Structure probing data (DMS and 2A3) for a 177-nucleotide construct.
The RNA was probed in 150 mM KOAc, 10 mM MgCl2 and 150 mM bicine (pH 8.5) at 24 C.
Reactivities are given for positions 27 through 126.
RNA sequence: GGGAACGACUCGAGUAGAGUCGAAAAGAGAGAAGGCGGUGGGCGUGCCUGCCAUGCUGGCGGUCUGCCCCCAGUGCUCAGAGCGACAUCUUCGGCAAGAAGUGGAUCACCCUCCUCGAUGUCACUGCCUACAAUGCUGGUUCGCCAGCAUUGUAGGAAAAGAAACAACAACAACAAC
Reactivity to DMS in 0.01 (KOAc 150mM, MgCl2 10mM, bicine 150mM(pH8.5), 24C), signal-to-noise 3, nucleotides 027 to 126: g000a130g000a070g000a100a130g020g000c210g000g040u000g010g020g010c030g010u000g010c030c000u010g000c000c090a160u010g020c100u000g010g010c030g000g030u000c030u010g030c020c000c020c040c010a080g020u010g000c050u000c040a100g000a120g000c030g000a050c060a090u000c010u000u030c060g000g000c160a090a130g020a060a050g010u020g010g000a100u000c090a060c060c030c030u000c040c010u000c070g000a050u000g010u000c000a100c090u000g000
Reactivity to 2A3 in 0.01 (KOAc 150mM, MgCl2 10mM, bicine 150mM(pH8.5), 24C), signal-to-noise 2, nucleotides 027 to 126: g040a000g020a000g060a160a050g070g060c060g020g040u110g050g010g020c050g010u090g000c000c020u010g010c020c010a050u280g080c070u110g010g020c000g020g020u040c020u060g020c000c000c000c000c000a010g030u080g030c010u030c030a050g040a020g110c050g030a030c020a050u000c030u120u040c020g050g020c080a100a030g040a040a020g040u060g040g040a090u090c050a130c010c020c000u010c010c010u010c040g030a040u140g040u060c000a020c100u070g060
Description:
The DMS profile rests on 2,060 reads. In probing experiments dimethyl sulfate is read out at A N1 and C N3, which are open when not base-paired.